[RMDB]
RNA sequence: GGGAACGACUCGAGUAGAGUCGAAAAGCAUGAAUGGCGGCAAUUUCAGUUCCCUGUCGAUUGCAUAGCAAUAUGGGUAGGCAAUCUGCUGUCAUAAUGACUAAAGGGAGUUUAGGUAAACGAGUAAGUACCACGUCCACUUCGGUGGACGUGGUACAAAAGAAACAACAACAACAAC
Reactivity to DMS in 0.01 (KOAc 150mM, MgCl2 10mM, bicine 150mM(pH8.5), 24C), signal-to-noise 2, nucleotides 027 to 126: g000c070a040u020g040a130a020u000g020g000c010g020g100c020a060a090u000u000u030c130a150g010u010u000c020c000c000u000g000u010c070g030a040u020u000g030c010a020u030a030g000c300a120a120u000a010u000g000g010g000u000a080g010g010c000a030a020u000c100u010g010c000u000g000u010c000a070u000a180a070u010g000a150c010u000a040a050a060g020g000g000a120g010u010u010u000a100g010g030u010a060a070a020c100g000a110g020u000a080a060
Chemical mapping of a 177-nucleotide RNA with DMS. The data come from the RNA Mapping Database (RMDB), library OK2TST. Values cover nucleotides 27 to 126. The reactions ran in a buffer of 150 mM KOAc, 10 mM MgCl2 and 150 mM bicine (pH 8.5), at 24 C.